[RMDB]
RNA sequence: GGGAACGACUCGAGUAGAGUCGAAAAGCGAGGAAGAGUACAAAUAUAUAUUUUGCAUUCAUCCUCUUCGUAAGUAGUGUUAACAUGGCUAUGCUAUGCUACAUAAUCAUCUCCAUGGAGGCUAAGAGAUCGAUAAUGACUUCGGUCAUUAUCGAUCAAAAGAAACAACAACAACAAC
Reactivity to DMS in 0.01 (KOAc 150mM, MgCl2 10mM, bicine 150mM(pH8.5), 24C), signal-to-noise 2, nucleotides 027 to 126: g000c220g000a030g000g000a010a050g000a000g030u000a010c000a010a020a010u000a210u030a120u040a070u020u000u000u000g040c010a080u000u000c030a150u000c030c040u000c020u000u000c070g010u010a080a090g020u000a060g010u000g010u000u000a020a070c000a020u000g000g030c040u000a050u000g010c040u000a010u000g000c070u000a030c040a030u000a060a100u000c100a090u000c120u000c040c060a130u000g040g040a110g020g000c110u000a090a090g030a140
Reactivity to 2A3 in 0.01 (KOAc 150mM, MgCl2 10mM, bicine 150mM(pH8.5), 24C), signal-to-noise 1, nucleotides 027 to 126: g000c030g030a010g010g020a020a010g020a030g000u060a030c010a020a060a000u140a030u030a030u010a200u220u000u010u020g000c010a020u000u060c000a080u070c010c060u040c040u080u080c080g040u050a090a100g030u070a010g040u080g010u160u070a050a040c010a050u030g020g080c000u030a000u110g000c000u040a010u040g010c000u040a120c010a100u070a080a030u020c010a010u030c010u100c020c000a010u020g080g000a040g000g000c020u020a050a010g090a000